[RMDB]
RNA sequence: GGGAACGACUCGAGUAGAGUCGAAAACCAAAUCCUAAGGACAUUUUAUUGUCUAUGGAUGCAGUUCAGCGACUAGACGGCAGUGGGUAUUGUAGAGAUAUGGGGUUAUUUAUGGCCUUAUCUACAAUGCUUAAGGUAUAGUCUAAUCUCUUUCGAACUCCUCUAGAGUGUUCGCACUCUAGAGGAGAAAAGAAACAACAACAACAAC
Reactivity to 2A3 in 0.01 (KOAc 150mM, MgCl2 10mM, bicine 150mM(pH8.5), 24C), signal-to-noise 1, nucleotides 027 to 156: c010c000a070a000a070u040c000c010u070a120a080g040g000a000c020a000u120u180u150u260a260u300u000g000u000c000u020a040u080g000g000a020u040g050c050a050g000u090u030c040a010g030c010g040a010c020u010a000g000a010c010g010g020c000a000g030u040g010g020g000u010a000u000u000g010u000a000g000a000g030a080u040a180u300g010g000g000g000u110u000a080u050u270u070a210u300g030g000c000c000u060u040a010u000c000u000a000c000a000a000u000g000c000u010u010a010a010g040g000u020a070u110a300g000u030c000u000a010a010u040c040u040c030u010u050u060c060g030a030a070